[RMDB]
RNA sequence: GGGAACGACUCGAGUAGAGUCGAAAAAGAAAGGUAUAUCAAAGAUCGAAAGAUCAACAAUGGUCGAUAGAUAUACAUCCCAAAUGAAGUAACAAAUCGAGCAACUUCAACGGAAACGACAAAAAAACACUUACCUUCAGUUCGCUGAAGGUAAGUGAAAAGAAACAACAACAACAAC
Reactivity to 2A3 in 0.01 (KOAc 150mM, MgCl2 10mM, bicine 150mM(pH8.5), 24C), signal-to-noise 2, nucleotides 027 to 126: a000g100a000a070a000g120g010u010a010u000a000u000c040a080a120a020g010a000u020c010g080a130a000a050g080a050u090c030a020a020c050a040a160u150g070g000u030c030g010a040u030a100g020a000u000a010u000a020c010a040u040c000c000c000a040a020a000u060g000a020a000g030u040a080a040c070a130a110a180u200c200g050a030g090c030a010a000c010u010u010c010a060a020c060g060g020a060a080a050c050g090a020c050a000a070a020a040a000a000a010
Reactivity to DMS in 0.01 (KOAc 150mM, MgCl2 10mM, bicine 150mM(pH8.5), 24C), signal-to-noise 1, nucleotides 027 to 126: a030g000a030a050a090g040g110u010a040u010a030u000c000a100a070a230g000a000u000c000g020a120a070a200g000a000u000c040a060a080c200a050a210u000g040g000u000c000g000a070u000a040g000a020u000a100u010a020c000a070u000c010c000c000a100a100a060u010g000a010a020g000u000a020a100c050a050a090a040u000c240g010a070g000c150a070a010c000u010u010c000a010a160c080g020g000a030a010a060c110g000a080c000a000a000a070a070a040a120a190
An RNA of 177 nucleotides, treated with 2A3 and DMS and read out base by base. For DMS the reverse transcriptase was MarathonRT. For 2A3 the reverse transcriptase was SuperScript II with manganese. Values cover nucleotides 27 to 126.